RNA sequence: GGGAACGACUCGAGUAGAGUCGAAAAGCUGCCUCUGACGUCCUUCUCCCCCGGAAACGGGGCCGAAGGGUGGUAAAGCGUGUCGCCUGGCGCUCGCACGGGUAUGCGUGGCGGUCGACCCUGGCCGACUGACCACGCGAUUCGUCGCGUGGUCAGUAAAAGAAACAACAACAACAAC
Reactivity to DMS in 0.01 (KOAc 150mM, MgCl2 10mM, bicine 150mM(pH8.5), 24C), signal-to-noise 4, nucleotides 027 to 126: g010c030u000g010c020c000u000c070u010g010a110c070g010u010c000c010u000u000c000u000c300c000c000c000c010g010g000a070a070a190c010g020g000g010g040c060c050g000a010a020g000g000g000u000g010g000u010a060a090a110g000c010g010u010g000u000c060g010c050c040u010g020g020c040g010c060u000c040g000c030a060c080g000g010g020u000a040u020g010c020g010u000g010g000c010g000g010u000c020g000a070c020c020c050u000g020g020c000c020g010
Reactivity to 2A3 in 0.01 (KOAc 150mM, MgCl2 10mM, bicine 150mM(pH8.5), 24C), signal-to-noise 1, nucleotides 027 to 126: g020c020u030g000c010c000u070c070u100g060a030c000g030u040c020c010u000u020c010u030c000c010c030c000c000g000g000a010a010a000c000g000g000g020g000c000c010g000a010a010g000g000g000u010g040g020u130a110a070a000g030c040g020u040g090u080c070g010c060c110u060g060g020c050g000c070u050c030g010c020a050c030g010g000g010u090a060u270g010c010g010u040g040g010c000g000g020u020c010g040a090c030c000c020u060g070g000c000c020g000